[RMDB]
RNA sequence: GGGAACGACUCGAGUAGAGUCGAAAAGAUAUGGACUCAGUAGGGAGUCGUCGGUCGGAAACGACCGAUACGACGAAGAACUAUUUGAGUCCUAAGUCAAACGUUACAGACUUCGGUCUGUAACGAAGCUUGUACCAAGGUUCGCCUUGGUACAAGCAAAAGAAACAACAACAACAAC
Reactivity to 2A3 in 0.01 (KOAc 150mM, MgCl2 10mM, bicine 150mM(pH8.5), 24C), signal-to-noise 3, nucleotides 027 to 126: g000a010u010a020u080g000g010a010c010u000c010a000g010u000a020g030g020g080a130g050u020c000g000u000c020g000g010u020c000g000g000a030a010a030c020g010a010c000c020g000a010u060a020c030g000a000c010g170a300a200g000a070a020c010u010a020u190u260u280g010a010g010u000c000c010u000a010a000g000u010c020a120a060a100c010g000u000u010a000c010a010g000a000c000u020u190c300g140g010u000c000u000g010u000a000a000c000g000a020a010
Reactivity to DMS in 0.01 (KOAc 150mM, MgCl2 10mM, bicine 150mM(pH8.5), 24C), signal-to-noise 2, nucleotides 027 to 126: g030a010u000a060u000g000g000a040c000u000c000a020g010u000a000g020g010g020a050g020u000c000g000u000c000g000g000u000c010g010g000a000a020a040c020g010a010c000c000g000a020u020a020c060g030a020c010g030a150a110g000a120a300c020u000a000u010u000u010g020a010g000u010c010c000u000a000a060g000u000c000a100a080a300c020g000u000u000a000c000a020g010a040c000u000u060c300g060g010u000c000u000g010u000a000a000c010g000a060a080